[RMDB]
RNA sequence: GGGAACGACUCGAGUAGAGUCGAAAAGCAACGGCAGAGGUCAUGUAUAAGCGAUUAGAUCCUAAGACCAUGAAGCACAUCCUGUUCGCCGAGAUUGUAGAUGGAGUAGGCAACGUGUCAGGUAAGACCCCGAGGUAUGAUUCGUCAUACCUCGGGGAAAAGAAACAACAACAACAAC
Reactivity to 2A3 in 0.01 (KOAc 150mM, MgCl2 10mM, bicine 150mM(pH8.5), 24C), signal-to-noise 1, nucleotides 027 to 126: g000c030a000a060c020g030g070c000a030g030a040g120g030u020c030a080u050g050u000a160u000a250a000g030c020g000a010u040u100a090g090a080u040c000c000u010a020a040g000a040c000c000a000u100g130a000a000g030c020a010c000a030u060c000c030u020g000u050u120c030g000c000c080g040a080g030a070u140u240g060u090a130g000a100u130g000g030a030g040u030a050g140g000c000a000a020c030g010u060g040u020c000a010g110g070u090a100a050g080a120
Reactivity to DMS in 0.01 (KOAc 150mM, MgCl2 10mM, bicine 150mM(pH8.5), 24C), signal-to-noise 2, nucleotides 027 to 126: g020c090a150a150c100g010g010c020a050g010a110g010g000u000c050a090u000g010u000a040u000a010a050g020c060g000a180u000u000a070g000a300u020c040c060u010a080a120g000a090c060c060a070u000g010a100a090g020c040a030c090a050u020c020c020u000g000u010u000c120g010c030c020g000a100g000a060u000u010g020u010a070g000a110u000g000g000a030g000u000a090g000g030c050a030a030c040g010u000g000u000c020a050g000g000u020a050a100g020a210